RNA sequence: GGGAACGACUCGAGUAGAGUCGAAAAGAGAGUCAGUGUGUGACAGACACUGACUCAGUGUGUCAGUCAGUCAGUGAGAGAGUGAGACUCUGUGUGUGACUGUCACUCACUGAGUGUCUCACACACACUCGAAAGUGUCCUUCGGGACACUUUCGAGAAAAGAAACAACAACAACAAC
Reactivity to 2A3 in 0.01 (KOAc 150mM, MgCl2 10mM, bicine 150mM(pH8.5), 24C), signal-to-noise 1, nucleotides 027 to 126: g190a000g010a000g000u000c030a040g020u050g020u010g020u090g190a070c010a060g080a000c000a000c020u040g020a010c000u000c000a000g000u060g000u020g020u010c000a020g010u000c000a020g020u000c000a000g000u030g020a050g010a020g000a000g020u080g050a120g070a130c010u020c090u190g160u080g030u000g030u000g190a020c000u000g090u120c020a010c070u020c000a080c050u050g000a020g100u010g040u010c000u000c000a000c000a000c000a010c010a000
Reactivity to DMS in 0.01 (KOAc 150mM, MgCl2 10mM, bicine 150mM(pH8.5), 24C), signal-to-noise 2, nucleotides 027 to 126: g010a120g000a010g030u000c030a000g020u000g000u000g010u000g000a110c300a160g000a030c000a010c060u000g010a010c000u000c000a030g030u000g010u010g020u000c190a060g000u000c030a050g000u010c000a000g030u000g000a060g010a080g000a090g040u010g020a150g010a160c040u000c090u030g040u000g000u000g010u010g000a030c060u020g030u000c030a080c000u000c020a010c050u000g000a020g010u000g000u000c000u000c120a010c030a040c030a010c010a130